RNA sequence: GGGAACGACUCGAGUAGAGUCGAAAAGAAACAGGCCGAAGGAAAUAUGGCGAAACGGCCUGACAAGGCUCGUAAAGAAAAGACGCCAUAUAGAAAAGAAAGAUUGAGCCAAACGCCAUAUUUCAAAAAUCGGGUAAAUAUUCGUAUUUACCCGAUUAAAAGAAACAACAACAACAAC
Reactivity to 2A3 in 0.01 (KOAc 150mM, MgCl2 10mM, bicine 150mM(pH8.5), 24C), signal-to-noise 2, nucleotides 027 to 126: g060a000a120a000c000a010g000g030c000c000g000a090a000g110g000a000a040a000u010a000u000g010g000c000g030a120a080a000c000g010g000c040c000u000g000a000c060a050a040g000g000c000u010c030g080u140a230a020a000g110a020a190a030a050g090a020c110g060c040c040a020u040a000u050a100g140a010a090a080a000g110a000a100a010g060a060u110u170g020a000g000c020c000a110a020a070c040g000c000c010a010u000a000u020u000u000c020a030a050a020
Reactivity to DMS in 0.01 (KOAc 150mM, MgCl2 10mM, bicine 150mM(pH8.5), 24C), signal-to-noise 2, nucleotides 027 to 126: g000a130a100a190c020a030g040g030c030c000g000a220a080g010g000a020a000a000u000a010u000g020g000c000g010a040a110a060c020g000g010c010c000u000g000a020c170a100a020g000g010c000u030c010g010u030a100a190a250g000a070a100a050a110g000a100c140g010c030c010a060u010a130u020a090g000a150a060a070a090g000a120a090a040g000a120u040u000g000a020g000c000c000a120a160a220c030g000c050c010a000u000a000u030u000u000c010a080a120a050